[RMDB]
RNA sequence: GGGAACGACUCGAGUAGAGUCGAAAAAGUGGCAUGGCUACGGCCAUGCCACAAUCCGUCACCUGACACGGCCAAACCAGGAACCGCCGCGGCCCGGCGGAGAUCACCUGCUACGGCAGGUGAUCAAUGAUCAGAGUUAAUUCGUUAACUCUGAUCAAAAAGAAACAACAACAACAAC
Reactivity to DMS in 0.01 (KOAc 150mM, MgCl2 10mM, bicine 150mM(pH8.5), 24C), signal-to-noise 4, nucleotides 027 to 126: a120g010u010g020g010c020a020u000g030g080c020u000a100c240g060g040c010c000a020u000g060c000c000a000c030a010a070u010c010c010g000u010c050a080c040c030u020g000a100c070a040c060g000g020c020c040a040a110a120c080c040a060g000g010a150a170c030c020g020c030c000g010c120g010g030c140c050c020g000g000c010g000g010a060g000a010u000c000a000c000c020u010g010c020u010a080c190g020g000c000a010g000g010u000g000a000u000c000a050a070
Reactivity to 2A3 in 0.01 (KOAc 150mM, MgCl2 10mM, bicine 150mM(pH8.5), 24C), signal-to-noise 6, nucleotides 027 to 126: a000g010u000g010g010c010a000u000g010g030c060u090a130c300g050g000c010c000a000u000g020c000c000a000c000a000a000u000c000c000g040u040c020a060c020c010u040g040a030c010a020c110g070g000c030c020a080a050a030c030c000a020g060g060a060a070c020c000g010c010c000g020c090g040g070c020c010c000g000g000c010g010g010a040g000a010u010c000a000c000c000u000g000c010u040a050c180g090g000c010a000g000g000u000g000a000u000c000a000a050